[RMDB]
RNA sequence: GGGAACGACUCGAGUAGAGUCGAAAAGGUUCGGUAGCUUUUCGUAUAUGGGCCGUAUAUCCCACUUUAAUACCUUUUAUCGUUGCCAACGUAACAGCAAUCAAUGGAACUAAAAACCAGGUUUUUCCAUGACGUCUUGGAACGAGAAAUACUGUAGAGAGUAACAGAGUUUCGACUCUGUUACUCUAAAAGAAACAACAACAACAAC
Reactivity to 2A3 in 0.01 (KOAc 150mM, MgCl2 10mM, bicine 150mM(pH8.5), 24C), signal-to-noise 3, nucleotides 027 to 156: g000g000u050u050c000g020g060u030a110g020c040u170u090u110u240c210g050u120a090u010a100u200g000g060g000c030c000g000u040a070u010a030u050c010c030c000a000c010u090u100u100a100a070u090a080c000c010u010u100u050u070a070u100c000g000u010u020g170c000c000a010a000c020g080u120a060a090c020a090g110c110a000a080u070c010a050a070u010g000g030a000a050c080u130a050a010a060a040a040c090c090a020g050g000u020u120u000u010u020c010c000a030u010g050a040c000g040u020c070u020u040g000g020a020a010c010g000a010g030a030a050a060u160a030c050u070g170u300a070g010
Reactivity to DMS in 0.01 (KOAc 150mM, MgCl2 10mM, bicine 150mM(pH8.5), 24C), signal-to-noise 2, nucleotides 027 to 156: g030g000u000u000c010g000g000u000a090g000c030u010u000u000u000c060g040u000a100u000a060u010g000g020g000c010c020g010u010a080u010a150u000c000c010c010a130c150u000u010u010a140a100u000a050c050c040u010u010u000u000a150u000c020g000u020u000g000c000c070a000a060c090g020u000a070a100c060a080g000c130a130a140u010c060a110a040u000g000g020a050a300c130u000a060a060a060a140a150c050c120a200g010g000u010u000u010u040u000c030c030a050u000g000a080c080g020u000c050u010u010g020g000a020a060c040g010a070g010a030a040a110u000a080c100u010g010u000a130g000